[RMDB]
RNA sequence: GGGAACGACUCGAGUAGAGUCGAAAAGAUAUGGAGGUUUCUGGGAGUUUGAUGUCGGAAACGACAUAUGCGAAGAACAGACUGACCUCCUAAGUCAAACAGUCAUGACCUUCGGGUCAUGACUGAAGACAUGUCCAUCGUUCGCGAUGGACAUGUCAAAAGAAACAACAACAACAAC
Reactivity to DMS in 0.01 (KOAc 150mM, MgCl2 10mM, bicine 150mM(pH8.5), 24C), signal-to-noise 2, nucleotides 027 to 126: g000a030u000a290u030g000g030a000g000g010u000u000u000c030u000g040g010g010a230g000u000u010u000g030a040u000g000u000c000g000g000a070a060a180c000g010a000c000a010u000a050u000g000c060g020a100a160g010a180a280c040a000g000a030c300u020g000a020c000c000u000c000c000u000a080a110g000u000c010a120a040a180c010a020g000u000c000a010u000g000a000c000c000u010u030c180g000g000g020u000c010a000u010g000a000c010u000g000a030a090
Reactivity to 2A3 in 0.01 (KOAc 150mM, MgCl2 10mM, bicine 150mM(pH8.5), 24C), signal-to-noise 1, nucleotides 027 to 126: g010a000u060a030u090g000g000a000g000g000u020u000u040c010u000g030g150g040a190g040u100u050u050g220a030u000g000u010c020g000g040a040a020a110c000g000a000c010a000u040a040u070g040c060g100a200a060g050a190a060c020a000g060a030c130u250g090a000c000c010u000c010c010u030a070a000g040u010c040a090a110a100c000a020g000u020c010a000u000g020a020c000c000u040u110c300g100g000g000u000c000a000u000g010a000c000u000g000a010a010